Structure probing data (2A3) for a 177-nucleotide construct. 2A3 adducts were read by reverse transcription with SuperScript II with manganese. It was measured as part of the RMDB library OK1LIB. The RNA was probed in 150 mM KOAc, 10 mM MgCl2 and 150 mM bicine (pH 8.5) at 24 C. For 2A3, 660 sequencing reads were counted. Values cover nucleotides 27 to 126.
RNA sequence: GGGAACGACUCGAGUAGAGUCGAAAAGGCCGACGCGGAGGUGGUGGGUGAUGGAGAGGCUGGCGAGGAGGUGACGUUUGGUUCGGUUGUCUCGCUGGUGGUGGGUGGGGCCGGGCGCCCGGGCGGGCCCGCACCCCACUUUCGAGUGGGGUGCGGGAAAAGAAACAACAACAACAAC
Reactivity to 2A3 in 0.01 (KOAc 150mM, MgCl2 10mM, bicine 150mM(pH8.5), 24C), signal-to-noise 1, nucleotides 027 to 126: g030g010c030c020g010a040c000g060c080g020g030a050g070g060u130g060g050u130g000g000g060u190g050a080u090g000g030a110g000a000g060g090c060u010g060g020c020g050a040g020g010a040g000g110u080g000a050c030g020u010u110u230g230g010u210u080c040g030g050u020u080g040u000c010u010c000g000c000u050g000g010u010g100g000u100g000g020g060u160g020g000g040g000c050c020g040g020g010c090g080c000c000c040g020g070g000c040g000g010g010